[RMDB]
RNA sequence: GGGAACGACUCGAGUAGAGUCGAAAAGUUGCAAAGGCUAUGAAAGCACGAUGAUCUAGCUAGUCCUAUCCGAAUCCCUAAAUGCCUUUGUGCAUUUGGAAGACGUGUACGCUCAGUGUGUGACUGAACGCCUAUUUGCGUUCGCGCAAAUAGGCGUAAAAGAAACAACAACAACAAC
Reactivity to DMS in 0.01 (KOAc 150mM, MgCl2 10mM, bicine 150mM(pH8.5), 24C), signal-to-noise 2, nucleotides 027 to 126: g030u010u000g010c060a050a060a150g000g010c030u010a090u000g000a080a130a050g010c010a080c070g000a110u000g020a210u000c060u000a070g030c020u000a140g030u000c010c050u000a110u020c050c020g010a120a100u000c030c010c020u040a030a040a000u000g010c020c000u010u010u000g030u020g050c010a010u010u010u000g000g010a040a030g030a070c070g030u000g010u010a050c100g040c090u010c030a020g010u010g030u010g020u000g000a230c030u010g040a130